[RMDB]
This 207-nucleotide RNA was probed chemically with DMS and 2A3.
Conditions: 150 mM KOAc, 10 mM MgCl2 and 150 mM bicine (pH 8.5), 24 C.
RNA sequence: GGGAACGACUCGAGUAGAGUCGAAAACUGCUUAUGCUAAAGCUGCGUAAGUUCAGUUGAGCCUGAAUUUUAAGUGAUACUAUCUAGCUUAGAAUUUGGUCAUUUUUGAUAGUGUAGAUUGAAAUUUGACAAAUUUUAAUUGAAAUUAAAGUCUUAGACUUUAAACAAAGUUCGCUUUGUUUAAAGUAAAAGAAACAACAACAACAAC
Reactivity to DMS in 0.01 (KOAc 150mM, MgCl2 10mM, bicine 150mM(pH8.5), 24C), signal-to-noise 2, nucleotides 027 to 156: c000u000g010c020u000u000a000u000g000c010u010a070a090a220g000c250u010g020c010g030u020a030a010g000u000u000c030a010g020u000u000g000a170g000c010c020u020g000a030a030u000u000u000u000a010a050g000u000g000a300u010a000c000u000a010u000c000u000a300g000c000u000u000a020g030a020a030u000u000u000g020g030u050c110a120u010u010u000u010u010g000a000u000a010g000u000g010u000a070g000a070u000u010g010a010a010a020u000u000u010g010a150c030a210a140a060u010u000u000u000a000a050u000u030g000a250a030a210u000u000a120a080a220g000u010c020u000u000a070g000
Reactivity to 2A3 in 0.01 (KOAc 150mM, MgCl2 10mM, bicine 150mM(pH8.5), 24C), signal-to-noise 4, nucleotides 027 to 156: c000u000g010c000u030u010a000u000g000c010u120a240a130a230g140c220u080g000c030g000u000a000a000g000u140u280c030a010g000u010u010g050a020g040c000c000u010g010a020a010u030u000u000u000a010a000g000u000g010a000u000a050c000u000a000u010c000u000a000g000c010u000u000a000g010a030a020u040u040u180g120g030u170c100a260u080u160u200u230u220g010a000u000a000g000u000g000u000a010g000a000u000u010g000a010a010a010u010u000u020g000a010c000a010a040a000u000u000u020u020a010a010u030u000g000a020a020a030u160u210a280a220a060g010u010c000u010u090a050g010